[RMDB]
RNA sequence: GGGAACGACUCGAGUAGAGUCGAAAAAGGCAGUGGGCCGGAAGCCCCAAGGCGGCAGUAUAUUGGAUCUGGCUCAGAUCCAGCUGAUAACAACUGAAUAAUGAACAAAUAAUGGCCGGCAACCUUCUACCUCCUUUUAGUUCGCUAAAAGGAGGUAAAAAGAAACAACAACAACAAC
Reactivity to 2A3 in 0.01 (KOAc 150mM, MgCl2 10mM, bicine 150mM(pH8.5), 24C), signal-to-noise 7, nucleotides 027 to 126: a010g070g010c040a030g040u110g040g010g030c000c010g030g010a020a000g040c020c010c010c020a030a060g060g010c040g030g020c010a010g030u080a070u060a080u250u100g000g000a010u020c010u020g170g100c130u130c180a020g010a000u000c000c000a000g010c010u020g030a040u050a150a020c080a040a030c060u140g050a040a070u230a150a090u230g090a060a040c040a070a080a040u180a100a040u130g080g000c000c000g000g000c000a040a070c000c010u050u030c000
Reactivity to DMS in 0.01 (KOAc 150mM, MgCl2 10mM, bicine 150mM(pH8.5), 24C), signal-to-noise 5, nucleotides 027 to 126: a050g000g010c050a040g030u010g000g000g010c000c010g010g010a140a080g000c050c010c030c060a090a090g010g010c060g000g010c010a030g020u000a100u010a110u010u000g010g000a010u000c000u010g000g020c170u030c060a050g000a010u010c000c010a020g000c040u020g000a080u020a050a110c130a120a110c040u010g000a090a090u020a120a100u020g000a070a090c140a030a060a080u030a060a110u020g000g010c010c000g000g000c040a130a070c100c040u000u010c100

Structure probing data (2A3 and DMS) for a 177-nucleotide construct. It was measured as part of the RMDB library OK1LIB. The RNA was probed in 150 mM KOAc, 10 mM MgCl2 and 150 mM bicine (pH 8.5) at 24 C.